RNA sequence: GGGAACGACUCGAGUAGAGUCGAAAACUGACUUUGUAUGGAUUCCGCGAUAUGGUGGUAGUAAGCCUAAAUAUCCUUGUGACAUUUGGCAAUAUACUGAAACUGGUCACACACCGGGUAUUGGUAAAUGUGAUUUAAAUCAAUUGAUUGGUAGUAAUACGAAAAGGAUAUUCGUAUCCUUUUCGUAAAAAGAAACAACAACAACAAC
Reactivity to 2A3 in 0.01 (KOAc 150mM, MgCl2 10mM, bicine 150mM(pH8.5), 24C), signal-to-noise 4, nucleotides 027 to 156: c020u040g090a020c020u090u060u110g080u100a060u070g060g060a080u090u020c060c060g050c010g020a020u030a030u160g040g020u020g010g000u010a040g050u030a130a050g000c000c030u070a060a070a020u040a040u020c020c030u080u060g060u060g020a020c000a050u040u070u030g020g010c000a070a010u080a020u030a110c060u040g000a060a040a020c030u060g030g000u040c030a000c000a000c000a010c080c040g000g040g000u080a060u060u070g080g030u050a030a050a040u060g010u000g050a040u020u050u200a060a060a040u070c060a020a050u040u050g100a070u050u000g040g000u000a040g020u030a040a120
Reactivity to DMS in 0.01 (KOAc 150mM, MgCl2 10mM, bicine 150mM(pH8.5), 24C), signal-to-noise 5, nucleotides 027 to 156: c050u000g010a080c060u010u000u010g020u000a100u000g020g010a170u000u010c020c030g030c060g010a120u000a070u000g020g020u000g020g020u000a070g020u010a070a230g000c030c020u000a040a050a040u000a040u010c010c030u000u000g020u010g020a030c010a080u000u000u000g010g030c010a090a130u000a120u000a100c050u000g020a070a080a120c080u000g010g010u000c020a070c080a040c090a070c070c040g020g030g030u000a060u000u000g010g010u010a030a050a050u000g010u010g010a080u000u000u000a060a070a080u000c030a070a130u000u010g010a130u000u000g000g010u030a090g020u010a090a190
An RNA of 207 nucleotides, treated with 2A3 and DMS and read out base by base.
The reactions ran in a buffer of 150 mM KOAc, 10 mM MgCl2 and 150 mM bicine (pH 8.5), at 24 C.
The DMS profile rests on 15,584 reads.
For 2A3 the reverse transcriptase was SuperScript II with manganese.